[RMDB]
RNA sequence: GGGAACGACUCGAGUAGAGUCGAAAAAAGACAACAGCAGGUGACACAGCCAGCAGCAUCCUGCAUGUUAGAGACUUGUACAACACGGCUGCACUGUACACGUCCCUGUGCACGGUUGAAACAGUUGACACCUGAAGUGUUUCGACACUUCAGGUGUAAAAGAAACAACAACAACAAC
Reactivity to DMS in 0.01 (KOAc 150mM, MgCl2 10mM, bicine 150mM(pH8.5), 24C), signal-to-noise 2, nucleotides 027 to 126: a030a020g010a120c070a010a040c020a070g010c030a020g000g010u000g020a140c110a110c080a110g010c050c080a090g020c070a060g020c060a050u010c020c020u000g000c020a090u000g000u000u000a070g010a090g000a030c010u010u000g020u010a060c010a050a060c070a120c130g000g000c070u000g000c050a110c070u000g000u000a010c040a030c080g010u000c020c030c000u000g000u000g010c060a040c120g010g000u000u010g020a040a100a070c190a060g000u000u010g000
Structure probing data (DMS) for a 177-nucleotide construct. For DMS the reverse transcriptase was MarathonRT. Values are in units of 0.01, from 0 to 300, in steps of 10. The reactions ran in a buffer of 150 mM KOAc, 10 mM MgCl2 and 150 mM bicine (pH 8.5), at 24 C.